[RMDB]
RNA sequence: GGGAACGACUCGAGUAGAGUCGAAAAUCAAUAGUAGAAUCUAUUCAAUGGUCGUAUUCUACUAGGAGUAUGAAGAAGUACGAAUAGAUCAUACUCAUUAGUCAGUAAUCGUACUUCACUGACUGAAGAUAGUAUGGUGAUUCGUCGCUAUACUAUCAAAAGAAACAACAACAACAAC
Reactivity to 2A3 in 0.01 (KOAc 150mM, MgCl2 10mM, bicine 150mM(pH8.5), 24C), signal-to-noise 9, nucleotides 027 to 126: u140c040a020a090u020a030g010u000a000g010a020a020u000c010u030a050u100u100c090a080a150u280g110g010u040c030g020u050a200u010u000c000u010a060c010u020a040g080g020a010g010u030a020u060g040a040a100g040a050a010g030u040a020c020g020a040a040u050a110g100a060u040c000a010u010a010c000u010c020a090u050u070a020g020u020c040a010g030u070a050a070u050c030g010u010a020c010u020u030c020a010c030u040g040a010c000u020g030a050a010
Reactivity to DMS in 0.01 (KOAc 150mM, MgCl2 10mM, bicine 150mM(pH8.5), 24C), signal-to-noise 9, nucleotides 027 to 126: u050c160a090a110u020a020g010u000a030g000a030a020u000c020u020a040u010u020c110a130a100u060g000g010u000c070g010u030a050u000u000c000u000a030c040u010a030g010g000a030g000u010a010u010g010a090a110g010a060a090g010u000a010c020g000a080a090u020a090g000a090u010c010a010u000a010c010u000c040a120u030u010a020g000u000c070a050g000u010a060a070u010c060g000u010a020c040u000u000c080a100c110u010g010a060c020u000g000a120a120

Chemical mapping of a 177-nucleotide RNA with 2A3 and DMS. Reactivities are given for positions 27 through 126. The 2A3 profile rests on 105,095 reads.